[RMDB]
RNA sequence: GGGAACGACUCGAGUAGAGUCGAAAAGCAGUACAGAGUAGAAAAGAGAGAUGGGUUUUGGAUGCCAUGGAAGGGAAUUUGAUAGCUUGUGGGCAAGCUGAUAGCGCACUAGUGACAAAGCACGUGGCAAUUCAGAUGGGUUCGCCCAUCUGAAUUGAAAAGAAACAACAACAACAAC
Reactivity to 2A3 in 0.01 (KOAc 150mM, MgCl2 10mM, bicine 150mM(pH8.5), 24C), signal-to-noise 2, nucleotides 027 to 126: g000c000a000g010u060a010c040a040g050a020g130u170a000g090a100a130a040a000g050a000g000a000g000a050u050g030g020g000u030u050u030u140g100g000a010u090g030c030c030a020u030g000g040a040a080g050g010g040a030a080u060u030u110g040a010u050a040g020c030u010u060g020u100g050g100g030c040a050a010g020c030u070g090a170u100a040g060c080g000c040a020c030u020a020g040u020g070a030c020a020a040a020g050c020a020c090g010u070g050g010
Reactivity to DMS in 0.01 (KOAc 150mM, MgCl2 10mM, bicine 150mM(pH8.5), 24C), signal-to-noise 3, nucleotides 027 to 126: g010c050a060g000u000a060c090a110g010a130g010u010a070g010a090a060a080a060g010a090g010a080g020a060u000g020g000g020u000u000u010u000g010g010a090u000g010c060c030a040u000g000g000a100a080g010g010g010a060a080u010u000u000g010a100u010a150g010c020u010u000g020u000g010g020g030c020a060a070g010c080u000g010a080u010a070g010c060g010c040a020c060u000a040g000u000g010a130c060a030a060a070g010c040a040c080g020u010g000g010